[RMDB]
RNA sequence: GGGAACGACUCGAGUAGAGUCGAAAAAGGGUGUUUGUAUUACCACAAAUGGCUCGUGGGCCAUUUUUAAUGACCACCAUCUUAAUAGACCUGGUGUCUAUUGUGGCUCUGAUUUUAUUGACAUUGUAACCCUAUUGCUUCGGCAAUAGGAAAAGAAACAACAACAACAAC
Reactivity to 2A3 in 0.01 (KOAc 150mM, MgCl2 10mM, bicine 150mM(pH8.5), 24C), signal-to-noise 2, nucleotides 027 to 129: a000g070g000g000u030g020u030u040u050g060u040a110u050u190a100c060c040a030c050a050a030a010u030g050g000c020u050c080g080u210g050g030g000c000c010a020u070u020u000u030u060a090a080u100g050a010c020c010a010c020c020a060u030c040u070u240a160a120u110a180g040a060c020c040u060g080g000u070g020u030c010u030a140u000u040g010u010g010g000c000u010c010u030g100a150u030u070u050u130a170u120u140g050a030c040a080u030u110g070u100a030a040c010
Reactivity to DMS in 0.01 (KOAc 150mM, MgCl2 10mM, bicine 150mM(pH8.5), 24C), signal-to-noise 9, nucleotides 027 to 129: a020g050g000g000u020g000u020u030u020g020u020a040u020u030a070c140c040a080c190a050a030a050u020g010g030c050u020c060g020u060g030g020g020c030c010a040u010u000u000u010u000a060a080u000g020a060c060c070a000c030c090a130u050c110u050u040a070a050u000a020g020a050c050c060u050g000g050u030g020u030c010u020a020u000u000g020u020g000g050c030u000c040u000g030a080u030u020u020u030a050u000u000g020a070c140a070u000u000g040u040a090a080c130
Chemical mapping of a 170-nucleotide RNA with 2A3 and DMS. The RNA was probed in 150 mM KOAc, 10 mM MgCl2 and 150 mM bicine (pH 8.5) at 24 C. For 2A3 the reverse transcriptase was SuperScript II with manganese.